An RNA of 207 nucleotides, treated with 2A3 and DMS and read out base by base. The reactions ran in a buffer of 150 mM KOAc, 10 mM MgCl2 and 150 mM bicine (pH 8.5), at 24 C. High DMS reactivity at an A or C suggests that its Watson-Crick edge is free. It was measured as part of the RMDB library M2RFPK. The DMS profile rests on 4,209 reads.

RNA sequence: GGGAACGACUCGAGUAGAGUCGAAAAGACGUAAUCCGCGCAAAUCGACAAACGCCAACGAUGAGCGUUUCGCUGUAGCCGCUUAAGGCAACAGCCGGGGCCGCCUGAGCCCUGUUACCAAAGACGGGAAACUCGAUGCCAUUCGUGGCAUCGAGAACACUACUCAUGAUUUCGAUCAUGAGUAGUGAAAAGAAACAACAACAACAAC
Reactivity to 2A3 in 0.01 (KOAc 150mM, MgCl2 10mM, bicine 150mM(pH8.5), 24C), signal-to-noise 9, nucleotides 027 to 156: g050a020c030g040u070a090a070u100c080c050g000c010g000c060a050a050a080u080c050g030a070c070a060a160a030c100g040c070c020a100a070c110g110a130u170g030a030g030c000g000u030u050u050c040g000c000u010g010u040a060g010c010c010g070c190u270u250a150a070g000g000c010a010a000c000a010g000c000c000g000g000g000g000c000c040g040c010c030u030g000a010g010c000c000c000u010g050u050u100a030c020c020a010a010a010g120a040c020g000g000g020a050a030a030c000u000c000g000a000u000g000c000c010a020u070u050c190g060u090g000g000c000a000u000c000g000a000g000a000a000
Reactivity to DMS in 0.01 (KOAc 150mM, MgCl2 10mM, bicine 150mM(pH8.5), 24C), signal-to-noise 2, nucleotides 027 to 156: g060a090c050g020u000a050a050u000c090c050g060c060g010c050a070a110a090u000c050g020a130c030a040a080a020c000g010c020c030a110a120c060g000a180u000g020a120g020c010g020u000u000u000c110g000c030u020g020u000a080g020c000c060g030c200u010u010a080a230g010g010c020a050a040c010a030g010c020c010g030g020g000g050c030c020g000c060c030u000g000a260g010c040c020c010u020g000u020u000a080c080c070a040a130a160g010a070c050g010g010g000a110a080a090c010u020c000g010a020u000g010c000c000a080u000u010c290g010u000g020g010c000a000u010c010g000a000g000a040a100